The record gives the reactivity of an RNA of 177 nucleotides to DMS and 2A3. Source: RMDB library OK1LIB, as collected in RNAgym. Reactivities are given for positions 27 through 126. The DMS profile rests on 3,373 reads. 2A3 adducts were read by reverse transcription with SuperScript II with manganese.
RNA sequence: GGGAACGACUCGAGUAGAGUCGAAAAACCACCGCCCGAUCGGUGGUCGCUGGCGCGCGCAUCAGGCCGUCGCGGUGCUACCGGACGGGGCCGAUCAGUAGUCUUCGAGCGCGGCCACAUUGCGCCAAUUAGCGAGCUAUUUCGAUAGCUCGCUAAUAAAAGAAACAACAACAACAAC
Reactivity to DMS in 0.01 (KOAc 150mM, MgCl2 10mM, bicine 150mM(pH8.5), 24C), signal-to-noise 3, nucleotides 027 to 126: a040c020c000a010c020c030g000c080c100c160g010a020u030c010g000g090u010g000g020u000c040g020c040u010g010g000c020g050c030g000c060g000c080a140u040c230a130g030g020c020c010g000u020c030g080c000g020g000u000g010c060u010a040c000c060g000g000a070c060g000g020g000g010c050c010g010a100u000c130a150g000u010a060g010u000c090u000u000c070g000a220g010c020g000c030g020g020c010c020a080c130a120u020u030g020c000g000c010c070a070
Reactivity to 2A3 in 0.01 (KOAc 150mM, MgCl2 10mM, bicine 150mM(pH8.5), 24C), signal-to-noise 4, nucleotides 027 to 126: a000c020c000a050c030c000g040c050c050c060g150a300u090c040g040g000u010g020g020u020c040g030c050u110g060g000c010g000c000g000c000g010c080a100u100c120a190g010g010c030c000g060u170c050g000c030g010g120u170g060c010u060a040c030c000g020g020a020c020g170g000g010g040c010c000g020a060u090c080a000g070u120a000g010u010c120u190u200c170g090a020g030c030g000c020g010g030c000c000a020c000a060u100u210g010c010g000c000c000a010